[RMDB]
RNA sequence: GGGAACGACUCGAGUAGAGUCGAAAACUGUGUGCUUCCAUCUGCAGAACUUGCAACAUAAACUCCUUGAGCCUUACCAAGUGGCUGUGAACCCAAGUCAGGACCAGAUGUGAGUAUAUCGUCGAUCACAGUAAUGGUACCAAACCCGAGACUGAGACAUUAGUGGGGAGUUCGCUCCCCACUAAUGAAAAGAAACAACAACAACAAC
Reactivity to DMS in 0.01 (KOAc 150mM, MgCl2 10mM, bicine 150mM(pH8.5), 24C), signal-to-noise 2, nucleotides 027 to 156: c020u000g010u010g020u020g030c040u000u010c100c010a050u000c070u010g030c090a100g000a060a070c050u000u000g060c070a130a150c030a080u010a070a100a130c020u000c050c030u000u020g010a080g000c050c030u010u000a150c020c030a070a170g040u000g020g030c110u000g040u000g000a110a080c060c000c000a030a090g010u020c050a080g070g020a130c120c000a030g010a060u000g020u000g000a050g010u000a060u010a170u010c090g010u000c020g020a120u000c020a040c000a030g000u000a070a090u000g030g010u000a210c040c030a050a100a130c030c020c010g010a110g020a120c010u000g010a210g010a190
Reactivity to 2A3 in 0.01 (KOAc 150mM, MgCl2 10mM, bicine 150mM(pH8.5), 24C), signal-to-noise 2, nucleotides 027 to 156: c010u010g020u040g010u040g060c000u090u000c070c010a020u000c020u050g010c010a020g020a140a010c010u030u040g050c070a050a030c000a100u200a110a110a030c040u090c010c000u040u070g050a020g040c040c030u080u010a070c100c030a140a020g020u050g040g000c030u000g020u000g000a020a010c000c000c040a010a000g040u040c040a050g070g050a100c030c020a000g000a030u030g050u020g020a000g070u030a020u010a000u080c150g080u020c070g030a060u060c030a010c000a020g020u090a040a090u130g060g000u050a070c060c000a010a020a080c030c010c010g050a040g070a060c060u040g050a050g000a130